[RMDB]
RNA sequence: GGGAACGACUCGAGUAGAGUCGAAAAAAAAACGCUGGGUAUCCUACCCACCGUUGAUCAGCUCGACGAUCUACUGAAGCGCGCACGGUAGGGAGAGCUGGUUUGACGAGGGAUACCUGUGCUGAAGCGCGCACGGCAACCGAAAGGUGCGAAAAAACUACGCUUAUUACUUCGGUAAUAAGCGUAGAAAAGAAACAACAACAACAAC
Reactivity to 2A3 in 0.01 (KOAc 150mM, MgCl2 10mM, bicine 150mM(pH8.5), 24C), signal-to-noise 1, nucleotides 027 to 156: a000a070a000a000a200c040g000c000u000g030g000g000u000a000u010c010c010u040a300c000c030c000a020c010c000g000u000u000g000a010u010c000a000g000c000u010c010g210a260c020g000a070u010c010u000a000c010u010g090a160a040g000c010g010c000g020c000a020c020g010g000u000a000g000g010g000a000g000a020g000c010u020g000g010u030u060u290g010a010c010g000a000g020g000g010a000u000a000c000c000u000g000u010g000c000u030g040a230a060g000c010g020c010g000c020a000c000g000g030c000a000a010c000c000g110a100a040a110g000g020u040g000c000g000a210a030a050a040a000a040
Source: RMDB library RNAMAK, as collected in RNAgym. Chemical mapping of a 207-nucleotide RNA with 2A3. Values are in units of 0.01, from 0 to 300, in steps of 10. For 2A3, 1,042 sequencing reads were counted. The reactions ran in a buffer of 150 mM KOAc, 10 mM MgCl2 and 150 mM bicine (pH 8.5), at 24 C. Reactivities are given for positions 27 through 156.